[RMDB]
The record gives the reactivity of an RNA of 177 nucleotides to 2A3 and DMS. DMS adducts were read by reverse transcription with MarathonRT.
RNA sequence: GGGAACGACUCGAGUAGAGUCGAAAAAGGUCGGCAGGGAUGCGAGGGGCUGAACGGUUUCGACUUCGCGCAUCGAAUCAAGGGAAGCGUGCCGGUGCAGGCAAGAGACCACCGUAAGCGUCAAAAAUACAUCCCUGACCUUCGGGUCGGGGAUGUAAAAAGAAACAACAACAACAAC
Reactivity to 2A3 in 0.01 (KOAc 150mM, MgCl2 10mM, bicine 150mM(pH8.5), 24C), signal-to-noise 2, nucleotides 027 to 126: a010g080g000u070c010g000g010c020a020g040g030g030a030u050g020c040g040a040g000g030g010g030c020u040g010a030a000c050g090g010u020u070u080c020g010a020c000u020u030c040g020c000g000c020a010u030c010g080a070a070u050c020a080a030g030g000g040a040a010g040c060g020u020g000c000c020g010g010u050g020c060a040g010g000c000a060a000g030a010g000a030c000c000a000c000c010g020u070a050a020g030c010g030u040c030a000a000a000a010a000
Reactivity to DMS in 0.01 (KOAc 150mM, MgCl2 10mM, bicine 150mM(pH8.5), 24C), signal-to-noise 3, nucleotides 027 to 126: a060g000g020u000c030g020g000c020a050g000g020g000a040u000g000c010g000a040g030g000g000g010c020u000g010a060a030c200g000g000u000u000u010c020g020a100c020u020u000c020g000c040g000c050a100u000c040g000a070a090u000c090a160a070g010g000g000a080a120g000c030g000u010g030c090c010g000g000u000g010c080a070g000g000c060a100a050g010a090g000a050c060c040a060c070c040g000u000a060a070g010c090g000u010c030a000a050a010a060a080
The reactions ran in a buffer of 150 mM KOAc, 10 mM MgCl2 and 150 mM bicine (pH 8.5), at 24 C. It was measured as part of the RMDB library OK1LIB.